[RMDB]
Overview:
Structure probing data (2A3) for a 207-nucleotide construct. The RNA was probed in 150 mM KOAc, 10 mM MgCl2 and 150 mM bicine (pH 8.5) at 24 C. Reactivities are given for positions 27 through 156.
RNA sequence: GGGAACGACUCGAGUAGAGUCGAAAAUUAAUACUGCUACAUUUUUAAGACCCUUAGUUAUUUAGCUUUACCGCCCAGGAUGGGGAGCAGCGUUCCUGCAAUAUCCAGGGCACCUAGGUGCAGCCUUCAUGCCUCAUGCCGUUCGCGGCAUGAGGAACUACAUAUAUGACUUCGGUCAUAUAUGUAGAAAAGAAACAACAACAACAAC
Reactivity to 2A3 in 0.01 (KOAc 150mM, MgCl2 10mM, bicine 150mM(pH8.5), 24C), signal-to-noise 2, nucleotides 027 to 156: u090u050a040a040u070a150c040u030g020c000u070a070c070a280u100u110u060u100u170a070a030g050a110c010c000c000u020u050a040g010u170u080a130u170u170u180a040g010c020u040u040u050a050c020c000g010c000c010c020a020g020g010a010u040g000g010g030g060a040g000c010a010g030c030g090u060u080c000c010u000g030c010a040a040u030a020u190c010c010a040g010g000g000c000a020c000c020u030a020g020g020u050g060c030a020g100c000c010u070u130c050a040u090g040c000c000u020c000a000u000g030c010c010g050u040u080c280g050c020g090g000c000a000u000g000a000g000g000a000a000
The 2A3 profile rests on 1,189 reads.